[RMDB]
RNA sequence: GGGAACGACUCGAGUAGAGUCGAAAAGAUAUGGACUAGAACUACUGUGAAGUAGCGUUGAAAUCGGAAACGAUGGAGCUACGUAAGCAGCUAGUCCUAAGUCAAAAGUAAGAGUUCGCUCUUACAAUCCUAGCAUUACGUUCGCGUAAUGCUAGGAAAAAGAAACAACAACAACAAC
Reactivity to DMS in 0.01 (KOAc 150mM, MgCl2 10mM, bicine 150mM(pH8.5), 24C), signal-to-noise 3, nucleotides 027 to 126: g000a040u000a300u000g010g000a020c010u010a000g010a040a010c040u020a280c000u000g000u010g010a070a260g000u000a000g000c000g000u000u000g000a080a090a020u000c000g020g010a080a090a130c000g010a040u000g000g000a070g000c000u000a000c020g000u000a070a300g000c010a000g000c070u000a000g010u000c010c000u000a040a090g000u000c010a040a130a120a090g000u000a010a010g000a010g010u000u030c300g020c050u000c000u000u000a000c000a080a120
Reactivity to 2A3 in 0.01 (KOAc 150mM, MgCl2 10mM, bicine 150mM(pH8.5), 24C), signal-to-noise 2, nucleotides 027 to 126: g030a000u090a030u070g020g000a010c000u010a000g020a120a080c110u270a040c000u300g040u080g090a200a070g020u010a000g010c040g170u280u070g000a040a080a000u020c010g020g000a000a060a020c000g000a010u030g000g050a020g000c010u020a010c020g000u010a010a000g040c000a000g000c000u010a000g000u020c000c000u000a070a020g050u010c050a110a000a060a120g010u000a000a010g000a000g040u000u170c280g070c170u000c010u000u000a010c000a000a060